Chemical mapping of a 177-nucleotide RNA with 2A3 and DMS. For 2A3, 417 sequencing reads were counted. Conditions: 150 mM KOAc, 10 mM MgCl2 and 150 mM bicine (pH 8.5), 24 C.
[RMDB]
RNA sequence: GGGAACGACUCGAGUAGAGUCGAAAACAAGGCGUAAGAGUGAAACCUGGUUAAGGAACUCGGCAAAUUAGCCCCGUAACUUCGGAAGAAGGGGUGCCUGCAGCGAUGCAGGCCGCAGAGAAAUGGCACGCCUUUAACGCUUCGGCGUUAAAGGCGUAAAAGAAACAACAACAACAAC
Reactivity to 2A3 in 0.01 (KOAc 150mM, MgCl2 10mM, bicine 150mM(pH8.5), 24C), signal-to-noise 1, nucleotides 027 to 126: c030a050a000g090g000c000g030u170a200a090g000a080g000u140g120a280a030a050c000c000u000g010g210u080u130a080a000g000g030a020a020c000u000c020g110g000c080a050a050a000u180u120a080g060c000c000c000c000g050u080a040a030c110u090u030c000g060g050a100a090g000a110a000g000g000g000g040u070g030c000c000u000g000c060a000g000c000g030a020u000g000c000a000g070g040c010c000g000c000a000g030a020g020a030a030a020u070g010g010c040
Reactivity to DMS in 0.01 (KOAc 150mM, MgCl2 10mM, bicine 150mM(pH8.5), 24C), signal-to-noise 2, nucleotides 027 to 126: c220a120a140g050g050c070g040u010a040a010g000a080g010u000g000a050a160a000c010c000u000g010g130u080u050a090a090g000g040a040a090c020u040c000g030g000c280a040a160a290u000u000a160g050c040c000c000c000g010u070a030a130c110u000u120c060g000g160a220a130g000a080a150g000g000g000g050u000g020c000c000u010g000c020a040g000c300g000a040u000g000c000a000g000g000c010c210g030c100a170g000a070g000a060a070a210u000g000g000c190
Overview
Source: RMDB library RFM100, as collected in RNAgym.